[RMDB]
RNA sequence: GGGAACGACUCGAGUAGAGUCGAAAACCGAGGCUGGUCACCUAAACCAGAGGGAGUUACCUGUUGUUUAACAGGCGGCUGUACUGAGUUAAGUAUAUGUCUGUAUCCCCAUACCUAAACUUUGUUUAUGAGUUUAUAUCUUCGGAUAUAAACUCAUAAAAGAAACAACAACAACAAC
Reactivity to 2A3 in 0.01 (KOAc 150mM, MgCl2 10mM, bicine 150mM(pH8.5), 24C), signal-to-noise 8, nucleotides 027 to 126: c010c000g000a040g010g010c010u020g000g010u040c050a170c070c060u120a110a050a040c010c010a020g050a150g030g010g010a080g040u150u300a060c000c000u010g010u040u010g090u060u230u220a010a000c000a000g000g010c000g000g000c000u010g020u030a000c000u030g080a070g220u120u200a080a020g000u010a030u020a030u200g060u020c060u090g050u040a120u060c000c010c000c010a070u150a130c010c020u090a060a060a060c060u120u100u140g070u030u070u000
Reactivity to DMS in 0.01 (KOAc 150mM, MgCl2 10mM, bicine 150mM(pH8.5), 24C), signal-to-noise 3, nucleotides 027 to 126: c040c000g000a090g000g020c000u000g000g000u010c120a120c090c130u030a060a070a080c050c050a080g000a100g020g000g000a100g010u000u020a200c020c000u000g000u000u000g010u030u010u020a010a010c000a000g000g030c080g000g020c030u000g010u000a030c000u000g000a150g010u010u010a120a080g000u000a020u000a020u030g020u010c010u000g040u010a120u010c030c010c010c060a080u010a070c060c060u000a060a090a090c130u000u020u000g000u000u000u010